[RMDB]
RNA sequence: GGGAACGACUCGAGUAGAGUCGAAAAAGCGGCAGGAGUGUCUUGCGUUGCGUUUUGCGACGGGGGCAUAUCUGCGGAGUUACAUUUGUUGCUAGAAUAAGCGUGAAUCAUAGUACACCGAGGGUCCAUGCAAGUCUGUAUUCGUACAGACUUGCAUAAAAGAAACAACAACAACAAC
Reactivity to 2A3 in 0.01 (KOAc 150mM, MgCl2 10mM, bicine 150mM(pH8.5), 24C), signal-to-noise 3, nucleotides 027 to 126: a000g200c050g050g000c020a000g000g060a050g020u010g000u000c000u030u070g180c010g030u010u010g030c090g000u060u040u210u300g020c030g000a010c020g020g000g020g000g000c000a010u060a210u040c000u000g000c020g000g010a010g030u090u140a040c040a110u050u100u050g020u000u050g000c010u000a010g090a130a280u150a160a020g050c000g040u040g090a000a030u100c050a030u070a100g010u030a030c020a050c090c060g030a020g070g000g000u000c050c000
Reactivity to DMS in 0.01 (KOAc 150mM, MgCl2 10mM, bicine 150mM(pH8.5), 24C), signal-to-noise 3, nucleotides 027 to 126: a110g000c080g000g020c000a030g010g010a210g020u000g000u010c000u000u000g010c010g060u000u000g020c000g020u020u050u020u040g020c010g010a010c000g020g000g010g010g030c000a010u030a030u010c020u000g000c000g000g010a150g010u000u000a070c100a120u040u010u010g010u000u010g010c050u000a100g000a060a060u030a050a070g010c060g000u030g000a060a040u030c060a060u020a040g010u030a080c110a080c060c030g010a120g000g010g010u000c040c100